[RMDB]
RNA sequence: GGGAACGACUCGAGUAGAGUCGAAAAGAAGCGGCGAAAUAUGCGUGUAAAUAAAAGGUCAAUAUGACCUGACAGUGAUACCAAAUUAAAUGGGUCGAAGUCUCGCCAAAAUACGCAACAAAUAGAAUACCUUGUCAAAGUUCGCUUUGACAAGGUAAAAAGAAACAACAACAACAAC
Reactivity to DMS in 0.01 (KOAc 150mM, MgCl2 10mM, bicine 150mM(pH8.5), 24C), signal-to-noise 2, nucleotides 027 to 126: g040a060a100g040c060g010g010c020g020a020a030a110u000a090u000g030c040g020u010g010u010a040a110a080u000a040a110a110a040g000g000u000c000a130a120u020a110u000g000a000c000c000u000g000a010c020a020g010u030g000a020u000a100c000c000a040a060a220u000u000a060a050a070u000g000g000g000u000c000g000a160a180g000u000c010u000c010g010c010c050a030a020a100a070u000a030c040g010c000a030a120c160a060a070a120u020a060g000a100a130
Reactivity to 2A3 in 0.01 (KOAc 150mM, MgCl2 10mM, bicine 150mM(pH8.5), 24C), signal-to-noise 2, nucleotides 027 to 126: g000a040a000g010c100g030g000c030g050a040a010a130u130a040u110g000c040g000u060g000u040a050a090a080u090a030a100a000a000g010g010u000c000a050a200u160a130u300g000a010c000c020u000g000a000c030a000g040u040g180a000u170a300c000c010a050a030a030u130u280a030a120a170u090g000g010g000u000c000g000a060a020g010u000c030u000c020g000c020c000a080a110a000a030u050a000c000g020c030a000a060c040a070a160a070u150a040g020a110a010
About this RNA
Chemical mapping of a 177-nucleotide RNA with DMS and 2A3. DMS adducts were read by reverse transcription with MarathonRT. It was measured as part of the RMDB library M2PK90.